[RMDB]
RNA sequence: GGGAACGACUCGAGUAGAGUCGAAAAGAUAUGGAAAUGGCCCUCUUUUGACGCUAUAGUAUCGGAAACGAUACGAAAUAGCGAUAAGAGGGCAUUUCCUAAGUCAAAAUCGGUCUUCGGACCGAAACAUGAGGUGUGAGUUCGCUCACACCUCAUGAAAAGAAACAACAACAACAAC
Reactivity to DMS in 0.01 (KOAc 150mM, MgCl2 10mM, bicine 150mM(pH8.5), 24C), signal-to-noise 2, nucleotides 027 to 126: g010a020u010a300u030g000g000a010a020a010u000g040g030c000c000c010u000c000u010u010u040u000g000a260c110g030c000u000a010u000a300g030u000a000u000c000g010g000a100a060a290c000g000a010u000a000c000g020a030a200a050u000a000g020c000g010a140u000a000a000g000a010g000g000g060c000a000u000u000u000c000c010u020a000a080g000u010c030a130a040a160a110u000c000g030g020u000c010u030u030c250g000g000a000c020c010g000a020a080a140
Conditions: 150 mM KOAc, 10 mM MgCl2 and 150 mM bicine (pH 8.5), 24 C. The record gives the reactivity of an RNA of 177 nucleotides to DMS. Values cover nucleotides 27 to 126.